An RNA of 207 nucleotides, treated with 2A3 and DMS and read out base by base. The reactions ran in a buffer of 150 mM KOAc, 10 mM MgCl2 and 150 mM bicine (pH 8.5), at 24 C. DMS adducts were read by reverse transcription with MarathonRT.
RNA sequence: GGGAACGACUCGAGUAGAGUCGAAAAUGUGACUCAAGAAGCUUUUCAGCUUUCAACCUCAUGCCUUGGAAUACUGACCUGAGACUGCUGCAUGAGGAAGGCCAUUAUUACCUGAUGGAAAAUGACAAGCUACAUGAAGUAGAGAUGAGUUUUUCCAAUCAUUUUAGUGGUUCGCCACUAAAAUGAUAAAAGAAACAACAACAACAAC
Reactivity to 2A3 in 0.01 (KOAc 150mM, MgCl2 10mM, bicine 150mM(pH8.5), 24C), signal-to-noise 6, nucleotides 027 to 156: u160g040u070g030a030c000u010c030a020a030g060a070a020g030c010u040u060u080u180c090a020g010c000u040u090u080c050a080a080c000c000u000c010a000u010g020c010c020u070u080g030g040a100a090u170a300c080u190g110a150c040c030u080g030a040g040a110c090u110g040c040u050g000c060a010u010g000a010g000g000a010a020g040g000c000c010a000u020u030a040u070u080a140c050c100u070g020a040u030g010g070a040a050a050a080u080g010a040c050a130a020g000c010u040a030c030a120u210g050a080a020g010u040a010g010a020g020a110u060g000a000g030u000u010u010u030u030c000c000a010
Reactivity to DMS in 0.01 (KOAc 150mM, MgCl2 10mM, bicine 150mM(pH8.5), 24C), signal-to-noise 3, nucleotides 027 to 156: u010g010u010g010a040c020u000c040a060a190g020a180a210g020c010u000u010u000u000c070a060g010c020u000u000u000c020a050a250c020c010u000c020a020u000g010c020c050u000u000g010g000a070a120u010a080c100u010g010a120c050c040u000g010a210g010a130c050u000g000c030u010g010c030a030u010g010a050g020g050a040a030g020g020c000c000a080u000u010a040u010u010a100c060c050u000g020a200u010g010g010a060a020a080a080u000g030a050c050a060a030g000c000u000a080c030a110u010g000a050a110g000u010a050g010a190g000a120u000g010a160g020u000u010u000u000u000c000c010a300